[RMDB]
RNA sequence: GGGAACGACUCGAGUAGAGUCGAAAAGAUAUGGAGUAUUCCCUCUUUUGACGGAGUUGCGUCGGAAACGACGCAAUACUCCGAUAAGAGGGAUACUCCUAAGUCAAAACGCUCCUUCGGGAGCGAAUCGUACAUCUAAGUUCGCUUAGAUGUACGAAAAAGAAACAACAACAACAAC
Reactivity to 2A3 in 0.01 (KOAc 150mM, MgCl2 10mM, bicine 150mM(pH8.5), 24C), signal-to-noise 4, nucleotides 027 to 126: g020a010u070a050u170g010g010a000g010u020a060u280u300c000c050c010u020c010u060u140u120u210g300a170c100g000g020a010g010u010u010g020c010g020u010c020g020g000a050a100a030c010g000a000c000g000c000a010a010u010a010c000u010c000c010g000a020u050a040a000g010a000g000g010g000a010u000a000c000u000c000c000u000a000a010g000u000c000a000a020a110a130c010g020c000u010c000c000u020u080c290g090g000g000a000g000c000g000a010a050
Reactivity to DMS in 0.01 (KOAc 150mM, MgCl2 10mM, bicine 150mM(pH8.5), 24C), signal-to-noise 6, nucleotides 027 to 126: g000a030u000a300u000g000g000a020g010u000a010u010u010c010c000c010u000c000u000u000u000u000g000a250c160g010g000a010g010u000u000g010c010g010u000c000g020g010a110a100a220c010g010a010c000g010c000a000a020u010a050c020u000c000c010g020a060u010a000a020g000a020g010g010g010a010u000a000c000u000c000c000u010a000a080g000u000c030a090a120a150a230c020g020c000u000c000c000u000u020c220g030g010g000a000g030c000g010a000a030